An RNA of 177 nucleotides, treated with DMS and read out base by base.
RNA sequence: GGGAACGACUCGAGUAGAGUCGAAAAGAUAUGGAGCCUAAAGGAGAGGCCAAUUUACAGCAAACAUGUCGGAAACGACAUGGUAGCUGUAAAUUGGCUACCCACCUCCGAUUGGGCUCCUAAGUCACUGUCCGAUAUAGUUCGCUAUAUCGGACAGAAAAGAAACAACAACAACAAC
Reactivity to DMS in 0.01 (KOAc 150mM, MgCl2 10mM, bicine 150mM(pH8.5), 24C), signal-to-noise 2, nucleotides 027 to 126: g030a050u000a300u000g010g040a000g030c000c020u000a050a090a300g010g030a050g020a180g010g000c010c020a000a000u000u000u000a000c000a000g000c000a030a210a300c010a010u000g000u000c000g020g030a180a170a260c000g000a010c000a000u000g030g040u000a140g000c000u000g000u000a000a010a000u000u000g000g000c000u000a060c040c080c140a300c090c000u020c000c010g000a300u000u000g010g000g000c010u000c000c000u000a000a070g030u000c000a170
Overview: The data come from the RNA Mapping Database (RMDB), library TTRINS.